[RMDB]
The record gives the reactivity of an RNA of 177 nucleotides to DMS and 2A3.
Conditions: 150 mM KOAc, 10 mM MgCl2 and 150 mM bicine (pH 8.5), 24 C.
The DMS profile rests on 2,510 reads.
Reactivities are given for positions 27 through 126.
Source: RMDB library OK2TRN, as collected in RNAgym.
For DMS the reverse transcriptase was MarathonRT.
DMS (dimethyl sulfate) methylates the pairing face of unpaired adenines and cytosines.
RNA sequence: GGGAACGACUCGAGUAGAGUCGAAAAAGCGUCCACGAAGCCGUACCCGAGCUGGUGUGAUGGCCGGCGAACAUCAUCGAGAUGAACAUGCCGGUGAUCUCGUCGGCCGAGAACCGGGGAGUGCCGGCCAAACUCCUCUUUUCGAAGAGGAGUUUGGAAAAGAAACAACAACAACAAC
Reactivity to DMS in 0.01 (KOAc 150mM, MgCl2 10mM, bicine 150mM(pH8.5), 24C), signal-to-noise 3, nucleotides 027 to 126: a110g020c100g000u000c030c040a110c150g000a140a140g010c040c000g020u000a120c030c020c010g020a300g020c040u000g000g000u000g010u010g000a150u020g000g000c010c000g020g000c000g010a050a080c280a010u000c010a010u000c010g000a160g000a080u010g000a090a150c240a100u000g010c030c000g020g000u010g000a010u000c070u000c000g010u010c000g000g020c010c010g000a050g000a080a070c040c000g000g000g000g010a190g010u000g010c300c020g000g000
Reactivity to 2A3 in 0.01 (KOAc 150mM, MgCl2 10mM, bicine 150mM(pH8.5), 24C), signal-to-noise 2, nucleotides 027 to 126: a000g050c020g050u020c030c000a080c070g060a110a010g010c000c000g030u040a000c020c010c010g030a040g030c090u100g000g100u060g040u140g090a150u290g030g020c020c000g000g000c020g020a020a020c010a020u000c000a010u040c000g070a100g050a300u170g090a120a150c060a120u240g100c020c000g030g020u000g000a000u000c010u000c020g010u000c060g070g010c000c010g000a000g020a010a010c000c030g000g050g000g000a050g010u070g020c050c000g020g110